[RMDB]
RNA sequence: GGGAACGACUCGAGUAGAGUCGAAAAUCACCGCCCAGGAUGGGGUGCAGCGUUCCUGCAAUAUCCAGGGCACCUAGGUGCAGCCUUGUAGUUUUAGUGGACUUUAGGCUAAAGAAUUUCACUAGCAAAAAUCUUUAAGGGUUCGCCCUUAAAGAAACUAUACUGCCGUGUUCGCACGGCAGUAUAGAAAAGAAACAACAACAACAAC
Reactivity to 2A3 in 0.01 (KOAc 150mM, MgCl2 10mM, bicine 150mM(pH8.5), 24C), signal-to-noise 1, nucleotides 027 to 156: u070c010a000c030c000g000c040c000c010a000g040g020a010u000g030g030g080g190u050g000c000a000g020c050g070u160u070c010c000u000g000c050a000a080u010a010u100c030c020a000g010g000g000c030a010c030c020u100a050g020g010u040g080c020a000g040c000c000u020u090g110u210a020g000u010u020u050u020a010g010u070g010g010a000c020u060u060u000a110g010g000c020u050a110a110a000g010a040a120u090u140u170c010a000c010u050a020g000c030a040a100a120a070a150u000c000u010u010u000a000a000g030g000g000u050u080c160g070c020c000c000u020u000a000a000a000g010a000a000a000
Structure probing data (2A3) for a 207-nucleotide construct. For 2A3, 523 sequencing reads were counted. For 2A3 the reverse transcriptase was SuperScript II with manganese. It was measured as part of the RMDB library M2RFPK. Values cover nucleotides 27 to 156. The RNA was probed in 150 mM KOAc, 10 mM MgCl2 and 150 mM bicine (pH 8.5) at 24 C.